[RMDB]
Chemical mapping of a 177-nucleotide RNA with 2A3.
It was measured as part of the RMDB library RFM100.
The reactions ran in a buffer of 150 mM KOAc, 10 mM MgCl2 and 150 mM bicine (pH 8.5), at 24 C.
For 2A3 the reverse transcriptase was SuperScript II with manganese.
RNA sequence: GGGAACGACUCGAGUAGAGUCGAAAAAGACUGUCAAGGUCAUUAUAGGCUUCGAAAGUUGCCAUAGACCAUGACAGUAUUACCAACAGGAAACGCAUGGCAUAGACUAUUGUCAUACCGAACUCCUGACCUGCUCGUACUUCGGUACGAGCAGGUCAAAAGAAACAACAACAACAAC
Reactivity to 2A3 in 0.01 (KOAc 150mM, MgCl2 10mM, bicine 150mM(pH8.5), 24C), signal-to-noise 1, nucleotides 027 to 126: a000g000a010c000u000g000u000c000a070a060g000g000u010c020a000u000u090a110u150a100g000g000c000u000u000c000g000a000a010a070g030u010u010g000c010c000a000u000a040g000a000c020c000a000u000g000a000c000a000g020u000a000u000u000a020c000c000a010a110c000a000g000g070a010a040a000c000g010c070a010u010g000g020c000a000u020a030g290a280c150u300a190u120u030g000u010c000a000u000a110c060c000g000a040a040c000u000c010c000u070